The data come from the RNA Mapping Database (RMDB), library OK2TRN. The record gives the reactivity of an RNA of 177 nucleotides to DMS and 2A3. Reactivities are given for positions 27 through 126. DMS adducts were read by reverse transcription with MarathonRT. For 2A3, 4,253 sequencing reads were counted. The reactions ran in a buffer of 150 mM KOAc, 10 mM MgCl2 and 150 mM bicine (pH 8.5), at 24 C. The DMS profile rests on 6,592 reads.
RNA sequence: GGGAACGACUCGAGUAGAGUCGAAAAGAGAGGUGACUUGGUCCCCGAACCUCAGUUCUUCCACCUGUGAAAUGCAGAUCAUAAAGGUGGAUCUGGCCUCACAGCUCUGGGCCCGUAGGACAAGCUGCCUGACUGUGUAAUUCGUUACACAGUCAGGAAAAGAAACAACAACAACAAC
Reactivity to DMS in 0.01 (KOAc 150mM, MgCl2 10mM, bicine 150mM(pH8.5), 24C), signal-to-noise 5, nucleotides 027 to 126: g010a120g000a040g000g010u000g000a120c170u010u000g030g020u010c000c020c120c100g010a100a060c020c040u000c040a210g010u010u000c060u010u000c010c000a020c080c000u000g020u000g000a020a070a070u010g010c120a070g010a060u000c010a130u010a060a080a100g000g020u000g000g010a010u000c020u000g000g010c060c120u000c030a040c030a030g030c030u000c020u010g000g000g010c020c010c040g000u010a080g010g000a070c060a100a100g010c200u010g000
Reactivity to 2A3 in 0.01 (KOAc 150mM, MgCl2 10mM, bicine 150mM(pH8.5), 24C), signal-to-noise 3, nucleotides 027 to 126: g060a000g010a000g000g030u040g060a100c070u110u150g120g030u080c020c020c000c020g040a020a020c010c020u030c030a050g060u120u060c010u070u000c010c020a090c060c010u000g030u000g040a020a090a000u210g050c030a000g030a090u010c010a030u150a200a270a070g260g050u090g080g000a000u010c010u010g050g000c000c000u030c010a050c010a020g010c020u030c030u020g000g020g000c030c000c000g050u080a060g040g000a000c010a020a020g030c050u080g030